[RMDB]
This 177-nucleotide RNA was probed chemically with DMS and 2A3. Values cover nucleotides 27 to 126. For DMS the reverse transcriptase was MarathonRT.
RNA sequence: GGGAACGACUCGAGUAGAGUCGAAAAGAUAUGGAUUAUGGUAGAGCGAUAAGAUGGCAUCGGAAACGAUGCUCAUCUUUUGACGCUCGAACAUAAUCCUAAGUCAAAACAUCGGUUCGCCGAUGAAGUUAUCUUGAUUGUUCGCAAUCAAGAUAACAAAAGAAACAACAACAACAAC
Reactivity to DMS in 0.01 (KOAc 150mM, MgCl2 10mM, bicine 150mM(pH8.5), 24C), signal-to-noise 8, nucleotides 027 to 126: g010a050u010a300u010g000g000a020u000u000a000u000g000g010u010a300g000a010g010c010g020a170u000a010a000g010a020u000g000g000c000a010u000c000g010g010a130a090a230c010g010a010u000g010c010u010c010a000u000c000u000u000u000u010g020a210c100g020c000u000c010g000a120a290c010a000u000a000a010u000c000c000u000a040a090g000u000c040a090a060a120a210c020a010u000c010g000g020u010u020c290g030c000c000g000a010u000g000a070a110
Reactivity to 2A3 in 0.01 (KOAc 150mM, MgCl2 10mM, bicine 150mM(pH8.5), 24C), signal-to-noise 4, nucleotides 027 to 126: g030a010u070a030u180g000g000a000u010u000a010u020g020g060u140a020g000a000g000c020g020a060u020a120a010g010a010u010g010g000c000a010u000c000g020g000a070a070a030c010g000a010u000g000c010u020c000a000u000c000u000u010u010u040g040a020c020g000c000u010c000g000a010a010c000a000u010a000a000u000c000c000u000a030a010g030u000c020a000a000a070a150c010a010u000c000g020g080u080u090c300g020c130c010g010a010u020g030a060a020
Conditions: 150 mM KOAc, 10 mM MgCl2 and 150 mM bicine (pH 8.5), 24 C.